[RMDB]
RNA sequence: GGGAACGACUCGAGUAGAGUCGAAAAAGCCUUUAGCGCGAUCAGGAGUGGCAACGGGUGCUUCCCUGGAUCAGGAGCACAGCGGGCGCCCUGCUGGAUUGGAGGGAUGGAAGUCAGCGGCGGGUCUGCGACGGCAGCAAAACAGCAGUGGUGGACGGUGUUUGUAAAGGUUCGCCUUUACAAACACAAAAGAAACAACAACAACAAC
Reactivity to 2A3 in 0.01 (KOAc 150mM, MgCl2 10mM, bicine 150mM(pH8.5), 24C), signal-to-noise 2, nucleotides 027 to 156: a010g050c040c000u060u060u080a060g010c050g000c030g020a040u030c070a050g090g020a080g060u090g060g010c030a050a070c100g000g000g060u030g000c010u120u130c010c000c080u030g070g050a090u130c060a030g010g010a020g040c030a000c010a030g130c060g000g050g000c050g000c040c000c000u020g000c020u000g000g080a100u070u100g030g010a000g010g030g000a030u080g010g010a070a050g040u090c030a000g040c010g070g000c020g020g020g010u030c030u050g000c020g040a040c030g060g000c000a000g000c030a000a060a000a030c030a100g010c000a030g000u020g060g010u020g040g000a010c040g000